[RMDB]
RNA sequence: GGGAACGACUCGAGUAGAGUCGAAAAAAUGUGACUUAAUCUAAGCUAUUGGUCUGGUGGCUGGGAGAGGAGGGCAGGCCAGCUCCUGUGGGAGGCCCGCGUGGCCGUGAAGGCAGAGGUCUCUGUGGUAAAUAUCGUGGUUCGCCACGAUAUUUACAAAAGAAACAACAACAACAAC
Reactivity to 2A3 in 0.01 (KOAc 150mM, MgCl2 10mM, bicine 150mM(pH8.5), 24C), signal-to-noise 2, nucleotides 027 to 126: a000a050u190g010u040g020a040c000u100u100a080a100u080c020u050a060a030g050c020u040a060u130u130g020g020u010c040u060g010g000u050g060g000c060u060g040g000g030a140g010a030g040g040a040g020g000g030c020a010g030g000c020c000a020g020c030u040c030c000u000g020u110g060g050g010a040g010g030c010c040c010g080c060g120u150g050g010c010c030g000u050g100a070a030g040g020c010a010g010a030g110g000u020c020u050c020u050g090u110g060
Reactivity to DMS in 0.01 (KOAc 150mM, MgCl2 10mM, bicine 150mM(pH8.5), 24C), signal-to-noise 2, nucleotides 027 to 126: a060a090u010g000u000g000a120c030u010u000a080a080u000c090u010a060a100g020c080u000a090u010u000g010g010u000c020u010g020g000u010g000g000c070u000g000g010g000a110g000a140g010g020a070g010g000g020c050a050g000g020c030c020a080g000c050u010c030c030u000g030u010g000g020g010a070g010g010c010c010c040g030c210g000u010g010g010c010c020g000u010g010a100a120g020g010c030a090g000a100g000g000u000c030u000c030u010g010u010g010
About this RNA:
The data come from the RNA Mapping Database (RMDB), library OK2TRN. The record gives the reactivity of an RNA of 177 nucleotides to 2A3 and DMS. The RNA was probed in 150 mM KOAc, 10 mM MgCl2 and 150 mM bicine (pH 8.5) at 24 C. DMS adducts were read by reverse transcription with MarathonRT.